[RMDB]
RNA sequence: GGGAACGACUCGAGUAGAGUCGAAAAAGAGGAAAGGAGGACACGGACGACAAACCGUAAGUUCUACUGCCCUUUAUUGUUGGGUGCACCCUGGGACCCAGUAAUACCCGGGGGGAGGCGGGGUAAAUAAGUCCAAGCUUCGGCUUGGACAAAAGAAACAACAACAACAAC
Reactivity to 2A3 in 0.01 (KOAc 150mM, MgCl2 10mM, bicine 150mM(pH8.5), 24C), signal-to-noise 2, nucleotides 027 to 129: a000g130a030g000g100a100a000a030g010g020a060g000g010a010c000a000c030g050g060a050c090g030a000c010a050a060a000c000c010g070u090a070a070g030u010u040c020u020a050c030u070g030c000c000c010u050u140u010a170u060u130g100u010u080g000g000g000u020g000c000a180c000c000c000u000g000g020g000a020c060c000c000a000g010u010a000a050u030a130c000c000c000g000g000g000g000g000g000a020g000g000c040g000g000g060g000u000a010a010a030u180a060a090
Reactivity to DMS in 0.01 (KOAc 150mM, MgCl2 10mM, bicine 150mM(pH8.5), 24C), signal-to-noise 2, nucleotides 027 to 129: a010g000a050g000g060a000a000a000g000g080a040g040g010a040c060a040c000g040g080a140c090g040a170c300a070a130a070c010c030g000u010a000a000g000u030u000c020u040a120c040u030g000c050c000c000u000u000u010a100u010u040g010u000u020g000g000g070u000g060c000a130c020c000c000u000g000g000g000a040c010c000c020a100g050u000a000a000u010a120c020c000c020g060g010g000g040g020g040a010g050g040c060g010g030g010g040u040a050a020a080u050a070a040
Conditions: 150 mM KOAc, 10 mM MgCl2 and 150 mM bicine (pH 8.5), 24 C. An RNA of 170 nucleotides, treated with 2A3 and DMS and read out base by base. Values cover nucleotides 27 to 129. For 2A3 the reverse transcriptase was SuperScript II with manganese. It was measured as part of the RMDB library 15KLIB.